[RMDB]
The record gives the reactivity of an RNA of 170 nucleotides to DMS and 2A3.
The data come from the RNA Mapping Database (RMDB), library 15KLIB.
For DMS the reverse transcriptase was MarathonRT.

RNA sequence: GGGAACGACUCGAGUAGAGUCGAAAACCGUCCUCCCGUCACGUCCAGCCCCUCCCCGUGUCUAGUGAAGGGGGACUCCGGAACUCCUUGCAUGUUAGGGACGAAGCCGCCCCCGGGCGCUCCCCUCGUACGCAUGCCUUCGGGCAUGCGAAAAGAAACAACAACAACAAC
Reactivity to DMS in 0.01 (KOAc 150mM, MgCl2 10mM, bicine 150mM(pH8.5), 24C), signal-to-noise 3, nucleotides 027 to 129: c000c050g020u030c070c030u000c020c030c060g000u000c110a070c150g060u030c030c040a120g010c070c010c000c000u010c000c070c020c060g060u030g020u000c070u000a110g030u000g040a140a060g020g000g000g000g010a060c040u020c110c010g000g030a070a040c070u050c010c010u060u030g000c100a070u040g030u100u030a070g060g000g070a080c040g000a160a070g000c000c050g030c060c000c020c000c050g000g030g000c070g030c070u020c020c000c010c070u040c000g000u020a110
Reactivity to 2A3 in 0.01 (KOAc 150mM, MgCl2 10mM, bicine 150mM(pH8.5), 24C), signal-to-noise 3, nucleotides 027 to 129: c010c020g060u040c000c000u030c000c030c010g040u050c030a060c040g060u030c020c040a050g030c000c000c000c000u000c000c020c000c020g100u070g040u040c050u090a110g050u070g130a060a050g010g010g010g010g020a020c010u020c020c020g030g020a020a020c000u030c010c000u040u060g120c060a070u120g030u160u130a040g020g000g000a000c020g040a060a030g020c020c030g040c000c000c000c010c000g010g000g010c000g010c010u040c000c000c030c000u020c010g040u050a040